[RMDB]
RNA sequence: GGGAACGACUCGAGUAGAGUCGAAAAGUUCAUAACGCACCACGAUCCAAAACUACUAGAAGUAGUUGAGUUUUACGAAGGUCCUGAAGAGGAAGAAGUAGAGCAUCAAGCAAAGCGAGAGGACCAACGCUGGAUGUCACUUCGGUGACAUCCAGCGAAAAGAAACAACAACAACAAC
Reactivity to DMS in 0.01 (KOAc 150mM, MgCl2 10mM, bicine 150mM(pH8.5), 24C), signal-to-noise 2, nucleotides 027 to 126: g000u000u000c070a060u070a250a230c040g040c070a180c030c040a140c000g000a090u070c090c150a100a180a140a000c000u000a000c000u000a110g030a020a200g000u000a000g000u000u010g000a190g000u000u000u000u000a020c080g000a200a150g000g000u000c030c000u030g020a030a160g070a190g000g000a010a000g000a050a110g010u000a140g000a120g000c120a240u000c120a020a190g100c080a060a210a030g030c100g010a130g000a290g010g000a160c050c070a080a010
Reactivity to 2A3 in 0.01 (KOAc 150mM, MgCl2 10mM, bicine 150mM(pH8.5), 24C), signal-to-noise 1, nucleotides 027 to 126: g000u030u030c120a070u100a230a000c220g000c010a000c000c000a040c000g210a000u080c000c000a030a030a030a030c000u000a030c010u090a170g080a080a000g250u000a000g000u000u000g000a000g000u270u270u040u000a000c000g100a000a000g050g000u000c000c000u100g100a080a060g100a100g070g000a160a000g000a000a000g010u000a180g000a030g040c000a140u160c050a110a060g110c120a120a070a060g030c010g050a040g010a010g140g010a040c000c000a080a000